RNA sequence: GGGAACGACUCGAGUAGAGUCGAAAAGUGUUAAGAUGCUUACUCCUAAAACUGGUACAGGUAUAGCUAUAUCUGUUAAACCAGAGAGUACAGCUGAUCAAGAGACUUAUGGUGGAGCUUCAGUGUGAUAACCAAUCGUUCGCGAUUGGUAAAAGAAACAACAACAACAAC
Reactivity to DMS in 0.01 (KOAc 150mM, MgCl2 10mM, bicine 150mM(pH8.5), 24C), signal-to-noise 6, nucleotides 027 to 129: g050u000g020u030u030a080a160g020a070u030g000c010u000u020a000c040u000c010c300u050a070a070a140a300c040u000g000g000u000a020c030a000g010g040u020a040u010a170g050c190u000a090u020a000u000c010u000g030u060u000a040a070a040c020c010a000g020a160g000a050g040u030a040c190a000g040c010u040g000a110u000c060a050a100g020a080g000a060c070u000u000a080u010g030g050u040g000g000a040g000c000u030u050c080a050g030u040g020u050g020a050u030a080
Reactivity to 2A3 in 0.01 (KOAc 150mM, MgCl2 10mM, bicine 150mM(pH8.5), 24C), signal-to-noise 7, nucleotides 027 to 129: g070u050g030u090u060a070a050g040a050u080g010c000u000u010a030c000u010c010c030u080a070a120a060a080c010u000g040g000u050a010c000a010g000g020u020a010u010a040g160c300u180a000u000a000u030c000u010g020u040u150a050a020a000c000c000a000g020a000g000a000g030u000a040c100a070g000c000u060g020a030u040c080a060a010g020a010g030a070c000u030u000a050u160g040g020u040g030g020a010g030c000u000u000c030a070g010u010g000u050g150a060u090a100